[RMDB]
RNA sequence: GGGAACGACUCGAGUAGAGUCGAAAAGCUGUGUUCCUACACUGACCAUAUAGAAAGAGGAGGCAGAAUAAACCUAUCCUAUGUACACUUCAGCCUAGGCCACUGUGUCUGGUCUGUCUUGUAAAUGGUUGCCCACUCCCUUCGGGGAGUGGGCAACAAAAGAAACAACAACAACAAC
Reactivity to 2A3 in 0.01 (KOAc 150mM, MgCl2 10mM, bicine 150mM(pH8.5), 24C), signal-to-noise 1, nucleotides 027 to 126: g040c000u100g000u000g000u100u090c000c000u100a050c030a030c000u090g170a070c050c050a030u000a000u000a300g300a000a220a000g240a000g030g030a000g000g010c060a090g120a120a000u300a190a000a000c010c010u000a000u290c000c000u200a150u210g030u000a030c000a030c020u000u000c000a000g000c000c000u000a000g000g000c000c000a300c050u100g000u090g000u240c000u000g000g000u000c000u000g000u000c000u000u000g000u000a000a170a170u090g000
Background
Conditions: 150 mM KOAc, 10 mM MgCl2 and 150 mM bicine (pH 8.5), 24 C. An RNA of 177 nucleotides, treated with 2A3 and read out base by base. The 2A3 profile rests on 271 reads. It was measured as part of the RMDB library RFM100.